[RMDB]
RNA sequence: GGGAACGACUCGAGUAGAGUCGAAAAGAUAUGGACGGUAUGGCGAAGAACUUACGUAACAUCAAUCGGAAACGAUUGUGGUAAGGGAGCCAGAAGUCCUAAGUCAAAACUCCGGUUCGCCGGAGAAGUCUUACAUGAUGUUCGCAUCAUGUAAGACAAAAGAAACAACAACAACAAC
Reactivity to DMS in 0.01 (KOAc 150mM, MgCl2 10mM, bicine 150mM(pH8.5), 24C), signal-to-noise 5, nucleotides 027 to 126: g000a060u000a300u000g000g020a010c010g050g000u010a130u000g000g020c020g000a100a150g000a130a200c010u000u000a010c010g010u010a080a100c130a030u020c010a000a010u000c010g000g000a100a070a170c000g010a010u010u000g020u010g010g010u000a000a010g020g000g010a100g000c000c000a010g020a130a180g000u000c000c000u010a030a090g010u010c040a070a070a100a150c000u000c000c010g000g000u000u010c250g020c000c000g000g000a010g020a010a040
Reactivity to 2A3 in 0.01 (KOAc 150mM, MgCl2 10mM, bicine 150mM(pH8.5), 24C), signal-to-noise 4, nucleotides 027 to 126: g010a030u060a040u140g010g010a010c030g050g240u090a030u020g010g000c000g170a300a050g020a100a030c010u010u010a000c010g120u140a110a090c050a150u280c010a020a030u000c010g040g000a050a040a040c000g010a010u010u010g000u000g030g000u000a010a010g000g010g020a000g000c000c020a010g050a010a000g000u000c000c000u000a040a010g010u010c010a000a010a100a220c000u000c000c020g000g040u070u080c300g040c060c000g010g010a010g010a010a010
An RNA of 177 nucleotides, treated with DMS and 2A3 and read out base by base. DMS adducts were read by reverse transcription with MarathonRT. 2A3 adducts were read by reverse transcription with SuperScript II with manganese.